[RMDB]
RNA sequence: GGGAACGACUCGAGUAGAGUCGAAAAAGUAGAGUAACAUGCUAUACAGGUUUGUAGCUUAGAAGUAAUAGGCUAUACUACAUAGCCUAGGUAUGUAGUAUGCUGUAUCAUCUAUAUGUGUAUUAGUAUAUAUAUAUGUACUAGUGUAUAUACAUGAUCAUUACGUACUCUUCGGAGUACGUAAUGAAAAAGAAACAACAACAACAAC
Reactivity to DMS in 0.01 (KOAc 150mM, MgCl2 10mM, bicine 150mM(pH8.5), 24C), signal-to-noise 2, nucleotides 027 to 156: a110g020u000a060g010a180g020u000a060a110c010a060u010g010c000u000a070u000a030c070a140g000g000u010u000u000g040u000a040g030c000u000u000a060g000a120a260g020u000a110a100u000a100g000g010c000u000a060u000a030c060u000a020c040a010u000a080g040c000c040u010a020g000g030u000a020u010g040u020a040g020u000a010u000g020c050u000g000u000a150u000c020a050u000c020u000a100u000a030u020g000u010g000u010a050u000u010a050g000u010a020u000a040u000a300u000a270u020a090u080g010u000a010c000u000a030g020u000g000u020a000u010a010u000a010c010a020u010g000a070
Reactivity to 2A3 in 0.01 (KOAc 150mM, MgCl2 10mM, bicine 150mM(pH8.5), 24C), signal-to-noise 3, nucleotides 027 to 156: a020g100u100a010g010a030g040u040a070a030c030a050u070g000c010u050a020u040a120c040a050g130g030u090u170u130g020u050a010g000c020u040u030a040g040a160a000g120u150a030a150u050a050g040g000c030u050a010u010a050c020u010a020c010a050u030a030g050c040c060u050a030g030g050u050a010u060g010u000a010g010u000a010u030g010c040u020g020u080a040u140c010a020u020c040u080a050u020a020u100g000u020g000u030a130u140u020a130g010u010a010u020a000u010a000u020a020u030a070u260g010u000a010c010u020a030g010u020g000u020a000u010a000u020a050c010a010u040g020a030
The record gives the reactivity of an RNA of 207 nucleotides to DMS and 2A3. Conditions: 150 mM KOAc, 10 mM MgCl2 and 150 mM bicine (pH 8.5), 24 C. Source: RMDB library OK3TST, as collected in RNAgym. The DMS profile rests on 3,563 reads.